[RMDB]
This 177-nucleotide RNA was probed chemically with 2A3 and DMS. For DMS the reverse transcriptase was MarathonRT. The reactions ran in a buffer of 150 mM KOAc, 10 mM MgCl2 and 150 mM bicine (pH 8.5), at 24 C.

RNA sequence: GGGAACGACUCGAGUAGAGUCGAAAAUGAAAGCGUAGCACGAGUCUAACGUGCCGGGAUAGAAUUGACUGUAGUCUAUUCCGGGGUGUAAGAAUCAUCCUACGCUUAUCUACAGUCAAUUAAGGUAGGUAGAGGUAGUUUUCGAACUACCUCUACCAAAAGAAACAACAACAACAAC
Reactivity to 2A3 in 0.01 (KOAc 150mM, MgCl2 10mM, bicine 150mM(pH8.5), 24C), signal-to-noise 4, nucleotides 027 to 126: u230g010a030a040a000g010c000g000u010a000g000c000a010c000g050a020g140u140c080u220a190a070c000g000u000g000c000c000g000g000g000a000u000a000g010a010a020u010u100g010a010c000u010g000u010a000g010u020c000u000a000u000u000c000c000g000g000g000g000u000g010u070a190a170g050a230a100u170c000a000u000c000c000u000a000c000g000c010u000u010a000u000c000u010a000c010a000g030u000c020a000a010u180u170a130a030g210g040u150a040
Reactivity to DMS in 0.01 (KOAc 150mM, MgCl2 10mM, bicine 150mM(pH8.5), 24C), signal-to-noise 2, nucleotides 027 to 126: u000g000a090a050a040g000c000g030u000a000g000c010a000c010g020a170g010u030c300u130a270a100c020g050u010g000c000c000g030g010g010a000u010a000g000a010a000u060u010g000a010c000u000g000u000a000g000u000c000u000a000u000u000c010c020g000g000g000g000u010g020u080a100a180g040a130a060u020c020a000u000c000c000u000a030c000g010c000u000u000a010u030c030u030a000c030a020g000u000c010a150a150u060u090a050a170g000g060u020a110